The record gives the reactivity of an RNA of 177 nucleotides to 2A3 and DMS. Conditions: 150 mM KOAc, 10 mM MgCl2 and 150 mM bicine (pH 8.5), 24 C. It was measured as part of the RMDB library OK2TST. Reactivities are given for positions 27 through 126. The DMS profile rests on 7,382 reads.

[RMDB]
RNA sequence: GGGAACGACUCGAGUAGAGUCGAAAAGAUUGUCUUUGAUCAAUUGUCAUAACAAUUAUGGAGUUGUUUGACAUCGCAGACGGGUUCGCUGAUCAUCAGAUCAACCUAAGAUCUUCUAAGCAGGCAACCUGGAUAGAUUAUUCGUAAUCUAUCCAGGAAAAGAAACAACAACAACAAC
Reactivity to 2A3 in 0.01 (KOAc 150mM, MgCl2 10mM, bicine 150mM(pH8.5), 24C), signal-to-noise 4, nucleotides 027 to 126: g030a020u050u070g020u030c050u070u080u100g030a050u080c050a080a180u130u070g010u000c000a020u060a190a010c010a010a030u100u080a190u300g250g010a190g070u000u000g000u000u040u020g010a000c010a000u010c070g000c050a020g030a060c020g050g000g000u060u080c060g000c070u010g010a050u070c030a040u070c030a040g010a040u030c020a000a060c010c010u030a090a010g010a040u020c000u040u000c060u090a070a050g040c020a000g070g000c010a010a010
Reactivity to DMS in 0.01 (KOAc 150mM, MgCl2 10mM, bicine 150mM(pH8.5), 24C), signal-to-noise 6, nucleotides 027 to 126: g010a100u000u010g000u000c030u000u000u010g010a070u010c080a110a110u010u010g010u000c010a020u010a040a020c010a010a010u000u000a150u000g010g020a140g010u000u000g010u000u000u000g010a030c010a020u010c180g010c090a080g000a060c080g000g010g010u000u010c120g010c050u000g010a050u010c070a090u010c190a070g000a030u000c040a030a050c060c040u000a100a130g000a030u000c020u000u010c080u000a090a130g010c090a060g000g010c120a070a130